[RMDB]
RNA sequence: GGGAACGACUCGAGUAGAGUCGAAAACGCGGGCCAUGGACAAGCUCUUUCCAGUACGGCAUCGCAGGAACCGUUGACACCAAUGCCCCCGAAGUCCUGGCUGGAGACCCGUAUACUCCUUCGGUGGCCGAUCCUGGUAUUUCGAUACCAGGAUCGGAAAAGAAACAACAACAACAAC
Reactivity to DMS in 0.01 (KOAc 150mM, MgCl2 10mM, bicine 150mM(pH8.5), 24C), signal-to-noise 1, nucleotides 027 to 126: c120g010c040g010g080g020c010c030a160u000g040g010a070c130a120a140g000c080u000c050u000u010u000c040c050a120g040u000a050c100g010g010c010a010u000c020g000c050a060g020g010a110a120c040c020g020u010u000g010a100c080a130c040c090a070a150u010g020c020c000c010c040c020g020a030a070g010u000c010c020u000g000g010c100u020g020g010a060g010a110c050c010c080g000u010a170u000a120c050u000c030c000u000u000c020g000g020u010g010g000